[RMDB]
RNA sequence: GGGAACGACUCGAGUAGAGUCGAAAAGGGCGUCAUUUCGAUGACGCCCAUACGUCUUCUCCGAUUGGCGAGGACGACGCCGACGGGCGCGUUUGCCAAUCGCACCGUCCAGAUUCGUCUGGACGAAUAGCUAAGCUAUAUUCGUAUAGCUUAGCUAAAAAGAAACAACAACAACAAC
Reactivity to 2A3 in 0.01 (KOAc 150mM, MgCl2 10mM, bicine 150mM(pH8.5), 24C), signal-to-noise 9, nucleotides 027 to 126: g010g000g000c010g010u000c010a010u040u080u160c230g090a020u010g000a000c000g000c000c000c000a000u010a000c000g080u010c040u040u000c010u000c010c010g010a010u000u010g010g000c040g030a100g140g060a080c020g040a140c010g010c010c010g150a300c210g080g010g000c010g000c010g000u000u020u100g000c000c000a000a010u010c000g000c010a060c030c040g000u000c000c000a010g010a040u030u080c120g100u000c090u010g000g000a000c000g000a010a070
Reactivity to DMS in 0.01 (KOAc 150mM, MgCl2 10mM, bicine 150mM(pH8.5), 24C), signal-to-noise 9, nucleotides 027 to 126: g010g010g030c000g020u000c000a010u000u000u010c200g010a020u000g010a020c010g010c000c000c000a000u000a010c250g010u010c150u000u000c010u000c030c020g000a020u000u000g000g000c010g010a110g010g010a030c000g000a070c000g030c000c000g010a190c300g000g000g010c010g010c010g000u000u000u010g000c000c000a010a010u000c010g010c130a080c170c010g010u000c000c010a010g000a040u000u010c170g010u000c000u000g000g000a000c000g010a040a060